[RMDB]
RNA sequence: GGGAACGACUCGAGUAGAGUCGAAAAGAUAUGGAUCGAGAGUCCGUGAACUACUCAGGUUGAUCGGAAACGAUCAACUGAGCACGGAUAGUCUCGAUCCUAAGUCAAAUCCACCUUCGGGUGGAAACUAAAAUAAGUCGUUCGCGACUUAUUUUAGAAAAGAAACAACAACAACAAC
Reactivity to DMS in 0.01 (KOAc 150mM, MgCl2 10mM, bicine 150mM(pH8.5), 24C), signal-to-noise 4, nucleotides 027 to 126: g000a050u000a300u000g010g000a000u000c000g010a020g040a300g020u000c000c000g020u000g000a070a020c100u010a300c020u000c020a020g000g010u010u000g010a020u000c010g000g000a150a110a260c000g000a010u000c000a000a010c020u000g000a010g000c010a000c000g000g010a010u000a090g020u000c000u000c010g010a000u000c000c010u010a000a110g010u000c030a100a140a130u000c000c000a000c000c000u000u010c210g020g020g010u010g000g000a010a030a150
Reactivity to 2A3 in 0.01 (KOAc 150mM, MgCl2 10mM, bicine 150mM(pH8.5), 24C), signal-to-noise 3, nucleotides 027 to 126: g030a000u100a050u220g000g010a000u010c010g010a000g010a010g040u000c000c040g020u000g000a060a070c090u300a070c020u300c040a010g300g140u040u010g000a010u010c000g000g030a050a110a030c010g000a000u000c000a020a000c000u010g000a000g000c000a000c000g020g020a010u040a040g060u000c000u000c020g000a000u010c000c000u000a020a000g000u000c000a030a050a230u030c000c000a020c020c000u080u110c300g140g000g000u000g000g000a070a020a010